[RMDB]
RNA sequence: GGGAACGACUCGAGUAGAGUCGAAAAUGGCCAAAGAGGACGGAAGCCUCAGACCACAGGUGAGACCCCUGUGAAGGAGAUACGGGGAGCCUUGGCCAGCACGUGCCCCUAGACAGUGCUGGCCAGGCCGAGGGAGAACUUCUGGAGCCAAGGUAAAACUGAGCUUUUAUUUCGAUAAAAGCUCAGUAAAAGAAACAACAACAACAAC
Reactivity to 2A3 in 0.01 (KOAc 150mM, MgCl2 10mM, bicine 150mM(pH8.5), 24C), signal-to-noise 1, nucleotides 027 to 156: u050g000g000c010c000a090a010a000g010a030g070g020a030c050g000g020a030a000g050c000c010u030c010a010g050a050c050c000a010c020a010g020g000u000g020a030g030a000c000c050c000c000u040g010u010g020a010a030g040g060a050g020a020u100a080c010g010g000g040g040a020g080c020c060u100u140g020g010c020c000a000g020c000a000c030g110u110g050c020c000c050c020u010a020g040a050c060a060g000u000g000c000u010g000g000c000c000a000g000g000c000c000g000a020g000g030g000a080g030a010a010c010u030u000c020u070g030g050a000g010c040c000a040a030g070g010u090a070a050a000

Structure probing data (2A3) for a 207-nucleotide construct. Conditions: 150 mM KOAc, 10 mM MgCl2 and 150 mM bicine (pH 8.5), 24 C. The 2A3 profile rests on 854 reads. It was measured as part of the RMDB library OK3TST.